[RMDB]
RNA sequence: GGGAACGACUCGAGUAGAGUCGAAAAGAUAUGGAGAUGCUGGGACAUGAAGAAGUGGUCGGAAACGACCACCUUCAACAGCCCAACAUCUCCUAAGUCAAAGGGGACAACCUUCGGGUUGUCCCCACAGAUGUUUUGAGUUCGCUCAAAACAUCUGAAAAGAAACAACAACAACAAC
Reactivity to 2A3 in 0.01 (KOAc 150mM, MgCl2 10mM, bicine 150mM(pH8.5), 24C), signal-to-noise 1, nucleotides 027 to 126: g000a020u020a000u090g010g010a010g010a010u000g000c010u020g000g000g010a080c110a300u260g000a080a020g040a230a060g020u010g000g020u000c020g040g010a010a020a000c000g000a000c010c000a000c000c000u000u020c000a070a070c100a120g030c000c000c000a000a000c000a000u000c000u020c000c000u000a000a000g010u010c030a050a060a270g030g000g000g000a010c020a000a020c040c010u070u080c240g060g000g000u000u000g000u000c000c010c000c020a000
Reactivity to DMS in 0.01 (KOAc 150mM, MgCl2 10mM, bicine 150mM(pH8.5), 24C), signal-to-noise 1, nucleotides 027 to 126: g020a010u000a130u010g010g000a000g000a000u000g020c030u000g000g000g010a020c130a050u000g010a070a150g010a140a130g010u000g000g000u000c010g010g010a020a030a080c000g020a030c000c000a000c070c010u000u000c000a030a130c080a150g010c000c000c010a000a000c000a010u010c000u000c000c000u000a000a050g000u010c000a090a130a100g010g000g000g000a020c010a000a010c010c000u000u000c290g010g000g020u000u010g000u000c000c020c010c000a010
Conditions: 150 mM KOAc, 10 mM MgCl2 and 150 mM bicine (pH 8.5), 24 C. Structure probing data (2A3 and DMS) for a 177-nucleotide construct. The 2A3 profile rests on 3,249 reads. It was measured as part of the RMDB library TTRDES. Reactivities are given for positions 27 through 126. For DMS, 1,981 sequencing reads were counted.